This 170-nucleotide RNA was probed chemically with DMS and 2A3. The RNA was probed in 150 mM KOAc, 10 mM MgCl2 and 150 mM bicine (pH 8.5) at 24 C. It was measured as part of the RMDB library 15KLIB. For 2A3 the reverse transcriptase was SuperScript II with manganese.
RNA sequence: GGGAACGACUCGAGUAGAGUCGAAAAACGGGCAUUGCUGCACGUCCUCCACCAGGUGAACAGUUUAAGCACCUCGUGCCUCUUAUGCAUAAGGGGGCUGCGUGGCCUAUUGUUAGACGACGUAUAGAAAGGGUAAGGUUCGCCUUACCCAAAAGAAACAACAACAACAAC
Reactivity to DMS in 0.01 (KOAc 150mM, MgCl2 10mM, bicine 150mM(pH8.5), 24C), signal-to-noise 5, nucleotides 027 to 129: a090c040g000g000g060c020a080u030u070g020c100u010g000c000a080c060g030u020c000c040u020c010c000a030c050c050a060g000g000u020g000a030a030c130a160g010u000u020u030a070a010g000c030a000c000c010u010c030g040u010g040c000c000u000c030u000u040a080u050g020c180a080u020a050a070g000g000g000g000g000c000u000g000c040g010u020g020g020c100c010u040a030u000u000g000u070u030a040g000a080c060g030a090c130g020u000a080u070a120g020a040a070a090
Reactivity to 2A3 in 0.01 (KOAc 150mM, MgCl2 10mM, bicine 150mM(pH8.5), 24C), signal-to-noise 9, nucleotides 027 to 129: a000c030g000g000g000c040a040u060u220g030c050u060g000c020a000c050g040u020c000c000u000c010c000a000c000c010a020g000g010u010g050a110a050c050a110g040u070u110u180a050a010g040c010a040c010c010u030c020g040u030g050c000c000u010c000u050u100a070u240g120c070a100u070a180a090g020g000g000g010g000c030u040g000c010g020u050g020g020c000c000u080a110u060u170g120u080u040a020g010a010c040g000a000c040g070u090a100u040a130g150a020a060a030